[RMDB]
RNA sequence: GGGAACGACUCGAGUAGAGUCGAAAAUGAAAUAAACGGCACCAAUAAGGAGGUGCGGAACAAGCGUGACCUACCUACACGCAACAAGCAGUCAGGUAAGACUGCAAAGGAAAGGAAAACAAAAAAAGUUAUUAACUCAGUUCGCUGAGUUAAUAACAAAAGAAACAACAACAACAAC
Reactivity to DMS in 0.01 (KOAc 150mM, MgCl2 10mM, bicine 150mM(pH8.5), 24C), signal-to-noise 2, nucleotides 027 to 126: u000g000a100a120a070u030a050a070a140c110g030g020c000a020c000c010a090a160u000a150a150g020g020a160g010g000u000g000c000g020g000a030a060c130a060a090g000c000g050u000g000a050c040c040u000a070c050c010u000a150c000a000c010g000c000a140a100c150a070a030g000c000a000g000u000c000a120g000g010u020a140a080g010a010c010u000g020c020a040a040a020g000g000a060a020a070g000g010a080a020a050a040c140a020a000a050a020a050a090a180
Reactivity to 2A3 in 0.01 (KOAc 150mM, MgCl2 10mM, bicine 150mM(pH8.5), 24C), signal-to-noise 2, nucleotides 027 to 126: u020g000a000a000a070u190a030a080a000c060g070g000c000a000c010c020a030a200u240a210a040g140g030a060g000g000u020g010c000g020g030a040a020c040a080a090g010c000g030u030g030a060c040c000u030a040c020c000u050a040c000a010c000g000c010a010a050c020a080a010g010c010a000g000u000c000a000g060g230u180a180a020g000a000c010u000g010c010a010a040a000g050g000a130a090a040g040g040a070a140a020a000c060a060a050a010a020a000a000a000
The record gives the reactivity of an RNA of 177 nucleotides to DMS and 2A3. The RNA was probed in 150 mM KOAc, 10 mM MgCl2 and 150 mM bicine (pH 8.5) at 24 C. For 2A3, 2,370 sequencing reads were counted.